[RMDB]
RNA sequence: GGGAACGACUCGAGUAGAGUCGAAAAUCUAACUCAUUCGUGAGUUAGAGUGAGCGCAGCGUCCAUUGGGCCGGUGGCGCGCUGUCGGUGCCGCGCGUGGCGAUAGUGCUUGCUUCGGCAAGCACAAAUGUAUAAACGCUUUCGAGCGUUUAUACAUAAAAGAAACAACAACAACAAC
Reactivity to 2A3 in 0.01 (KOAc 150mM, MgCl2 10mM, bicine 150mM(pH8.5), 24C), signal-to-noise 3, nucleotides 027 to 126: u010c000u000a000a000c000u010c000a020u070u080c210g120u030g030a000g000u000u010a000g000a010g010u110g100a060g010c050g000c020a030g000c000g030u010c020c010a020u060u120g050g060g020c020c030g060g010u020g010g040c060g010c020g010c040u030g050u070c020g040g070u090g050c010c010g050c010g010c030g050u050g020g000c020g030a060u120a120g000u000g010c000u000u000g000c000u020u020c070g100g000c000a000a000g000c010a000c000a010a010
Reactivity to DMS in 0.01 (KOAc 150mM, MgCl2 10mM, bicine 150mM(pH8.5), 24C), signal-to-noise 5, nucleotides 027 to 126: u000c000u000a010a000c000u000c000a050u000u000c210g030u000g000a020g000u000u000a000g000a030g020u000g010a110g020c080g020c020a070g010c030g030u000c020c020a090u000u010g010g010g020c030c040g010g010u000g010g010c120g010c060g010c030u000g010u010c050g020g010u010g000c020c020g010c090g010c070g030u010g010g010c040g010a080u000a090g010u000g000c000u000u000g000c000u000u010c190g010g000c000a000a000g000c000a000c000a010a050